[RMDB]
RNA sequence: GGGAACGACUCGAGUAGAGUCGAAAAGUGGCUCUGUCACGUGAAGGCGAACCUUCAGAGACUGUAAUGAAGUGGGCGCAAGCUUAAGGGACAGUCCAAUCCACGGGGAGACCCGGUCCACAGGCAUAGAGGGGUUUGCUCACCCUUGAGGACUGUGCAGUGAACAAGAGUUCGCUCUUGUUCACUGAAAAGAAACAACAACAACAAC
Reactivity to DMS in 0.01 (KOAc 150mM, MgCl2 10mM, bicine 150mM(pH8.5), 24C), signal-to-noise 2, nucleotides 027 to 156: g040u000g000g060c030u020c040u010g040u010c020a080c090g000u010g020a030a060g000g030c020g030a100a030c010c010u000u000c020a140g030a230g000a190c180u000g000u000a150a200u010g020a060a090g020u000g040g000g020c030g000c050a030a070g060c050u000u010a070a090g020g010g000a040c010a000g060u000c010c000a070a140u000c050c030a040c050g010g000g000g020a290g010a250c010c000c030g000g070u000c020c040a030c010a030g000g000c040a130u000a280g000a060g000g010g020g020u000u000u020g030c130u020c050a090c000c000c020u000u110g020a220g000g000a030c000u000g000u000g010
Reactivity to 2A3 in 0.01 (KOAc 150mM, MgCl2 10mM, bicine 150mM(pH8.5), 24C), signal-to-noise 3, nucleotides 027 to 156: g100u050g000g050c080u030c040u100g030u000c010a050c110g070u100g070a060a050g080g000c040g000a020a060c000c010u010u020c020a010g010a040g050a130c130u140g050u220a140a100u110g050a080a000g040u120g030g010g020c000g000c060a060a040g030c010u100u120a100a130g050g020g010a000c000a000g030u000c000c000a010a070u020c050c020a020c020g000g000g010g010a070g030a050c000c030c000g010g000u060c030c000a040c010a010g010g000c030a040u090a080g020a020g030g020g000g020u050u160u120g050c050u070c040a120c010c010c000u010u050g010a050g010g020a010c000u000g010u000g000
An RNA of 207 nucleotides, treated with DMS and 2A3 and read out base by base.
Conditions: 150 mM KOAc, 10 mM MgCl2 and 150 mM bicine (pH 8.5), 24 C.
The 2A3 profile rests on 1,711 reads.